[RMDB]
RNA sequence: GGGAACGACUCGAGUAGAGUCGAAAAUUCAGAGGCUUGAAUGCCAAUGAAGAGUAACAAGAGUUGAGGCAACUGCUAGCGUUCAGGUAACCCCUUUACGUGAUGCAUUUGUCCACUCUUGCACAGAUUGAGGAUGAUUUUUCGAAAUCAUCCUCAAAAAAGAAACAACAACAACAAC
Reactivity to DMS in 0.01 (KOAc 150mM, MgCl2 10mM, bicine 150mM(pH8.5), 24C), signal-to-noise 9, nucleotides 027 to 126: u000u000c010a010g000a300g000g000c010u000u030g030a150a070u050g030c000c010a010a230u000g010a010a010g000a180g010u010a110a180c000a000a010g000a010g010u010u010g010a140g020g010c000a000a000c050u000g000c010u000a300g010c000g000u000u000c050a020g000g000u030a260a140c300c210c000c000u000u000u000a000c000g020u000g010a110u040g000c000a010u000u000u000g000u000c000c000a020c000u000c000u000u000g000c120a050c120a100g000a150
Reactivity to 2A3 in 0.01 (KOAc 150mM, MgCl2 10mM, bicine 150mM(pH8.5), 24C), signal-to-noise 6, nucleotides 027 to 126: u020u000c000a000g010a020g010g000c010u110u210g160a220a060u250g050c000c000a000a000u010g010a010a010g030a020g060u090a090a030c000a010a000g020a000g000u060u100g080a150g080g000c000a010a010c010u000g000c000u000a010g000c010g000u000u000c010a000g000g000u050a080a080c030c020c000c000u000u000u020a000c000g000u020g020a020u230g000c000a000u000u000u000g000u000c000c000a000c000u000c000u000u010g010c030a020c020a040g130a080

Conditions: 150 mM KOAc, 10 mM MgCl2 and 150 mM bicine (pH 8.5), 24 C. Structure probing data (DMS and 2A3) for a 177-nucleotide construct. It was measured as part of the RMDB libraries RFM100 and RFMREP. 2A3 adducts were read by reverse transcription with SuperScript II with manganese.